[RMDB]
RNA sequence: GGGAACGACUCGAGUAGAGUCGAAAAAAAGACUUUUCAAACCAUCAGCUCUCAUGAGAACUCCCUCACUAUCAUGAGAAUAGUGUAGAGGAAACCACCCCAUGAUCCAAUCACUUACCACCAGAUCGCAUUUAUCGUGCUUCGGCACGAUAAAUGCAAAAGAAACAACAACAACAAC
Reactivity to 2A3 in 0.01 (KOAc 150mM, MgCl2 10mM, bicine 150mM(pH8.5), 24C), signal-to-noise 2, nucleotides 027 to 126: a000a000a030g130a040c080u150u080u020u000c060a060a100a120c030c060a120u090c040a020g020c020u000c000u040c000a050u100g130a020g020a090a010c030u010c030c000c000u060c030a020c000u050a040u040c020a120u190g210a030g060a100a000u030a000g070u010g080u150a050g030a060g020g020a030a000a020c000c000a000c000c000c000c030a030u090g030a040u000c030c020a030a110u020c050a020c080u000u090a010c000c040a110c000c010a020g020a150u090c150